[RMDB]
RNA sequence: GGGAACGACUCGAGUAGAGUCGAAAAGCUAGCAAAUGUUAGUGGAACAACGGGAGUAAGGUUCUCCCUGGUUCACUAACGUGCGAUGACCCAGAUUGCUGGGAGGUACAUGGAGUGUCCUCCAAACGUAAAUACUAAUAUUCGUAUUAGUAUUUACAAAAGAAACAACAACAACAAC
Reactivity to DMS in 0.01 (KOAc 150mM, MgCl2 10mM, bicine 150mM(pH8.5), 24C), signal-to-noise 9, nucleotides 027 to 126: g000c040u000a160g000c010a030a100a060u050g000u000u000a000g010u000g010g010a000a010c010a080a140c250g000g000g000a010g010u020a100a150g020g020u040u020c000u000c000c000c000u000g000g000u000u000c000a010c000u000a000a000c000g010u010g000c030g000a130u020g000a150c000c000c000a080g000a140u020u020g010c030u000g000g000g000a010g010g000u030a020c020a090u020g010g020a180g010u000g000u010c000c000u000c000c000a040a070a090c170
Reactivity to 2A3 in 0.01 (KOAc 150mM, MgCl2 10mM, bicine 150mM(pH8.5), 24C), signal-to-noise 6, nucleotides 027 to 126: g010c010u040a000g000c000a020a020a090u150g000u000u000a000g000u010g020g020a020a010c020a020a040c040g000g000g000a010g020u080a110a050g180g070u160u020c000u000c000c000c000u010g020g000u000u010c000a000c000u000a000a000c000g000u000g000c010g020a020u050g040a030c000c000c000a000g050a110u030u090g000c010u020g020g000g000a010g000g000u120a010c010a020u150g100g080a090g060u050g010u020c000c000u000c000c000a010a010a000c040

Source: RMDB library OK1LIB, as collected in RNAgym. This 177-nucleotide RNA was probed chemically with DMS and 2A3. As a SHAPE reagent, 2A3 marks flexible, mostly unpaired nucleotides at the ribose 2'-OH. The RNA was probed in 150 mM KOAc, 10 mM MgCl2 and 150 mM bicine (pH 8.5) at 24 C. 2A3 adducts were read by reverse transcription with SuperScript II with manganese.